[RMDB]
RNA sequence: GGGAACGACUCGAGUAGAGUCGAAAAGCGAAACGCUCUCAGUAAUCCUCCGCACUCCGGUCCGCUUAGCACGGAGUCCGAGAGUGGCAGAGCUCCGUAAAUUCGGAGUUCGCUAUUCGACCACAUGUACUCACCAUCUUUUCGAAGAUGGUGAGUAAAAAGAAACAACAACAACAAC
Reactivity to 2A3 in 0.01 (KOAc 150mM, MgCl2 10mM, bicine 150mM(pH8.5), 24C), signal-to-noise 8, nucleotides 027 to 126: g050c020g040a050a020a030c090g010c010u010c000u010c020a030g040u100a060a130u070c010c010u020c010c020g020c000a000c010u020c010c010g060g040u050c030c030g070c090u120u160a030g010c030a030c070g010g000a010g040u000c010c010g110a120g000a000g040u040g020g000c020a020g000a000g000c010u000c000c000g030u050a070a150a090u160u080c000g000g000a000g000u000u000c000g000c010u070a120u010u070c030g040a050c030c010a050c020a110u180g030
Reactivity to DMS in 0.01 (KOAc 150mM, MgCl2 10mM, bicine 150mM(pH8.5), 24C), signal-to-noise 5, nucleotides 027 to 126: g000c000g010a020a040a180c130g020c010u000c020u010c040a160g010u020a070a120u020c040c000u020c040c050g030c240a060c010u000c010c010g000g000u000c080c080g010c080u010u020a140g010c140a190c030g000g000a050g010u010c060c070g000a090g010a010g020u020g010g010c110a120g000a040g000c000u000c000c000g000u000a060a120a250u060u030c000g000g000a030g040u000u000c000g000c030u010a050u000u000c030g000a120c010c020a110c160a070u050g000